An RNA of 177 nucleotides, treated with 2A3 and DMS and read out base by base. The data come from the RNA Mapping Database (RMDB), libraries RFM100 and RFMREP.

[RMDB]
RNA sequence: GGGAACGACUCGAGUAGAGUCGAAAAGUGAAUGAUGAUUGGUUGCACAUUAUCUGAUCGUCUGUUGAGCUCGCGUUCAUUCGUAGGCUUUGAAAUUAACCGUCCGUGUUCGCACAAAUCUGACCAACUUCUCUGUAUGUUUCGACAUACAGAGAAGAAAAGAAACAACAACAACAAC
Reactivity to 2A3 in 0.01 (KOAc 150mM, MgCl2 10mM, bicine 150mM(pH8.5), 24C), signal-to-noise 9, nucleotides 027 to 126: g100u090g080a120a100u100g040a030u020g010a020u060u090g040g060u060u140g080c080a040c040a170u110u210a050u110c020u030g030a040u040c020g030u020c050u050g090u080u120g030a020g010c030u060c050g020c030g020u090u110c070a060u110u060c030g030u040a070g000g000c000u040u020u090g080a080a080a040u090u050a050a030c000c000g030u030c010c010g020u030g020u030u040c040g000c060a010c020a040a060a030u050c040u050g050a060c010c020a030a070
Reactivity to DMS in 0.01 (KOAc 150mM, MgCl2 10mM, bicine 150mM(pH8.5), 24C), signal-to-noise 7, nucleotides 027 to 126: g020u010g010a090a060u000g010a030u000g000a040u000u000g010g000u020u010g010c140a140c130a080u010u020a050u000c020u000g000a040u010c020g020u000c030u010g010u000u010g000a050g020c030u010c100g020c040g000u010u010c180a100u030u010c040g040u010a120g010g010c040u000u000u000g010a080a060a090u010u010a070a100c050c030g000u010c030c050g020u000g000u000u010c020g000c080a070c100a020a060a050u010c060u010g000a110c060c050a060a170

2A3 adducts were read by reverse transcription with SuperScript II with manganese.